[RMDB]
Conditions: 150 mM KOAc, 10 mM MgCl2 and 150 mM bicine (pH 8.5), 24 C. Structure probing data (DMS and 2A3) for a 177-nucleotide construct. For DMS the reverse transcriptase was MarathonRT. Values are in units of 0.01, from 0 to 300, in steps of 10. For DMS, 4,321 sequencing reads were counted. It was measured as part of the RMDB library OK1LIB.
RNA sequence: GGGAACGACUCGAGUAGAGUCGAAAAGCAGUUCCGAAGGGGUCACUGCGAACACUUGACUACCGAUCGGGCCAGUCUUGUGGAUUGGACGGACUACCUCCGGUCGGGCCGGUAGGACGUCCGAAAAGGCAAGGAGGUGCUUCGGCACUUCCUUGCCAAAAGAAACAACAACAACAAC
Reactivity to DMS in 0.01 (KOAc 150mM, MgCl2 10mM, bicine 150mM(pH8.5), 24C), signal-to-noise 2, nucleotides 027 to 126: g010c020a040g010u000u040c000c010g010a150a030g000g000g000g000u000c260a020c010u010g000c000g010a140a170c040a020c010u000u000g000a030c010u000a090c030c000g000a070u030c150g000g000g020c120c130a030g010u000c020u000u000g010u000g000g000a140u020u010g000g000a010c040g000g010a040c000u000a010c010c000u020c040c010g000g010u020c200g010g000g000c070c180g000g000u000a000g010g010a040c020g000u010c000c020g000a010a040a120a150
Reactivity to 2A3 in 0.01 (KOAc 150mM, MgCl2 10mM, bicine 150mM(pH8.5), 24C), signal-to-noise 2, nucleotides 027 to 126: g000c020a000g000u020u000c010c000g020a080a060g060g030g000g020u090c040a000c030u010g010c010g010a070a010c010a010c020u020u060g000a000c000u030a050c030c000g050a050u250c060g010g020g000c080c050a000g010u010c000u020u060g000u010g030g060a050u010u120g000g010a000c010g000g000a000c000u000a010c000c010u000c030c000g090g180u130c070g050g000g000c030c020g000g000u000a010g000g000a000c010g000u000c000c000g000a000a000a000a000